[RMDB]
RNA sequence: GGGAACGACUCGAGUAGAGUCGAAAAGAUUAUGUUAAGGAGAUGGCGCAUACGUAUAUUCGAGUUGUAUUAGCUUUACCACAUAUGCGUGUUAUGCACCCUUUGUAAUUCAAGUGUGAGGGUGGCGAACAUCAAGACACUUCGGUGUCUUGAUGUUAAAAGAAACAACAACAACAAC
Reactivity to 2A3 in 0.01 (KOAc 150mM, MgCl2 10mM, bicine 150mM(pH8.5), 24C), signal-to-noise 4, nucleotides 027 to 126: g050a000u070u150a100u190g230u100u180a030a010g050g010a100g040a150u170g040g040c030g000c020a000u030a040c010g060u000a010u020a030u110u180c140g060a050g030u020u030g070u110a120u070u210a040g050c050u070u140u100a030c000c010a010c020a070u020a010u030g020c010g030u000g070u170u090a020u120g030c000a010c000c000c010u040u040u060g070u100a110a190u140u130c100a050a100g030u030g050u030g150a060g000g020g040u070g030g000c020g040
Reactivity to DMS in 0.01 (KOAc 150mM, MgCl2 10mM, bicine 150mM(pH8.5), 24C), signal-to-noise 5, nucleotides 027 to 126: g020a090u020u020a050u020g020u010u010a040a070g030g000a070g010a080u020g010g010c010g000c040a020u000a030c050g020u000a040u010a050u010u030c190g010a040g010u000u010g000u010a070u020u030a050g000c040u020u000u010a140c210c090a080c090a040u020a010u000g010c040g010u010g010u030u020a060u020g010c030a060c040c010c000u010u000u020g020u030a050a060u020u020c190a050a120g000u000g020u010g010a040g000g020g030u020g000g010c040g010
Overview
An RNA of 177 nucleotides, treated with 2A3 and DMS and read out base by base. For DMS the reverse transcriptase was MarathonRT. The reactions ran in a buffer of 150 mM KOAc, 10 mM MgCl2 and 150 mM bicine (pH 8.5), at 24 C. It was measured as part of the RMDB library OK1LIB. In probing experiments dimethyl sulfate is read out at A N1 and C N3, which are open when not base-paired.